[RMDB]
RNA sequence: GGGAACGACUCGAGUAGAGUCGAAAAGGUCAUGACAUUAAGUUAUGUGGAGUGCUUGCCUGAGCUGCUAACAUUGAAACCAAGGUUCAAUAAAUCAGGAGUAAUCAGUGUCAGAUAUCUAGAUUACUGAUCCGUAAAAUUUCGAUUUUACGGAUCAAAAAGAAACAACAACAACAAC
Reactivity to DMS in 0.01 (KOAc 150mM, MgCl2 10mM, bicine 150mM(pH8.5), 24C), signal-to-noise 4, nucleotides 027 to 126: g000g000u010c040a070u000g000a040c020a130u010u010a100a160g010u010u000a040u000g010u010g010g010a120g020u000g010c060u000u010g010c030c010u010g000a060g010c040u010g000c070u000a050a070c110a080u000u000g010a030a080a100c060c070a070a100g030g010u000u000c040a030a040u010a040a070a080u010c050a040g000g000a100g010u000a040a030u000c020a020g010u000g010u000c130a070g000a130u010a040u000c050u010a100g000a080u000u000a050c110
Reactivity to 2A3 in 0.01 (KOAc 150mM, MgCl2 10mM, bicine 150mM(pH8.5), 24C), signal-to-noise 3, nucleotides 027 to 126: g060g010u050c010a050u050g030a060c010a030u200u210a160a120g030u040u060a050u120g030u050g080g040a040g020u040g010c060u060u040g010c020c000u000g000a000g010c020u040g020c000u040a070a040c030a110u030u040g050a130a000a010c050c010a050a140g070g000u010u020c010a060a000u050a090a090a030u020c030a020g000g040a030g060u050a030a030u020c010a010g040u000g030u050c020a020g050a150u110a020u080c020u010a030g040a140u020u120a020c050